[RMDB]
RNA sequence: GGGAACGACUCGAGUAGAGUCGAAAAAUGCUAAUACUGAGCCACCAGGUAGGGCAGUGUUGCCCUGGUUUGGGUGCCAGUGAGUUUAACAAAACUUCUCACAUGAAGAUCUGAGGGGCAUGUGAAACUUAUCUUAUGUGUUCGCACAUAAGAUAAGAAAAGAAACAACAACAACAAC
Reactivity to 2A3 in 0.01 (KOAc 150mM, MgCl2 10mM, bicine 150mM(pH8.5), 24C), signal-to-noise 9, nucleotides 027 to 126: a000u090g010c030u060a090a060u060a230c010u010g020a020g060c020c020a030c010c000a030g140g060u020a000g000g030g000c010a050g070u130g240u300u090g000c000c000c000u010g000g030u040u040u040g020g000g000u020g000c000c010a010g000u030g020a010g010u070u100u070a100a050c060a030a090a040a050c030u130u040c020u020c030a020c000a020u070g050a080a070g050a200u070c070u180g030a060g000g010g010g010c010a010u020g020u010g050a050a020a010
Reactivity to DMS in 0.01 (KOAc 150mM, MgCl2 10mM, bicine 150mM(pH8.5), 24C), signal-to-noise 9, nucleotides 027 to 126: a080u010g010c030u000a060a110u010a030c010u000g000a130g000c030c060a050c010c010a020g000g000u000a020g010g000g020c000a050g020u010g010u010u000g020c000c000c000u000g000g000u010u000u000g010g010g010u000g010c020c010a020g000u000g010a070g010u000u000u000a080a080c150a060a050a080a100c110u000u000c060u000c020a030c070a040u000g000a120a100g000a070u000c130u010g000a070g010g000g000g010c040a050u000g010u000g010a070a080a150